[RMDB]
The record gives the reactivity of an RNA of 207 nucleotides to 2A3 and DMS. Values cover nucleotides 27 to 156. For DMS, 1,659 sequencing reads were counted.
RNA sequence: GGGAACGACUCGAGUAGAGUCGAAAAUAGAAUUUGGUGUUUCUCAAUAAAGUCACCUAUAAACUGCCUUGAUUUGAGUACUUCAAUCGCUAGUUGAGUCUUGUCAGAGCUUCUGCUACCACCUAAGUUGAUUCCCGCCAUACUGGCAAGGCCACCAAGGCCUGAAGAAAUUCGUUUCUUCAGGCCUAAAAGAAACAACAACAACAAC
Reactivity to 2A3 in 0.01 (KOAc 150mM, MgCl2 10mM, bicine 150mM(pH8.5), 24C), signal-to-noise 1, nucleotides 027 to 156: u190a020g050a020a070u120u040u090g000g000u000g000u020u060u010c020u010c030a080a130u080a060a030a040g060u010c020a090c010c040u070a080u170a210a130a020c030u020g000c010c000u070u090g030a060u070u130u140g000a060g000u080a040c040u140u070c020a090a050u090c070g000c110u100a080g140u120u060g080a020g020u010c010u030u000g010u000c040a010g000a030g140c020u110u010c050u070g040c000u100a080c000c050a020c000c000u110a070a010g000u040u080g040a080u030u010c000c000c000g060c000c010a160u160a240c020u010g000g010c030a010a010g000g040c000c000a000c010c000a070
Reactivity to DMS in 0.01 (KOAc 150mM, MgCl2 10mM, bicine 150mM(pH8.5), 24C), signal-to-noise 1, nucleotides 027 to 156: u000a130g000a100a140u000u000u000g040g020u000g030u010u010u000c020u010c030a130a080u000a070a020a100g000u000c020a010c090c110u000a180u010a090a070a050c090u000g000c030c040u000u000g010a100u000u000u060g020a010g010u010a100c070u010u000c070a040a110u000c070g030c070u010a100g020u000u000g000a160g010u000c040u000u000g040u010c030a010g000a100g000c040u010u000c060u000g000c030u000a070c020c030a060c020c050u000a070a070g040u000u000g000a270u010u000c000c000c010g040c130c060a160u000a170c040u010g000g070c040a090a030g030g010c020c000a030c060c020a160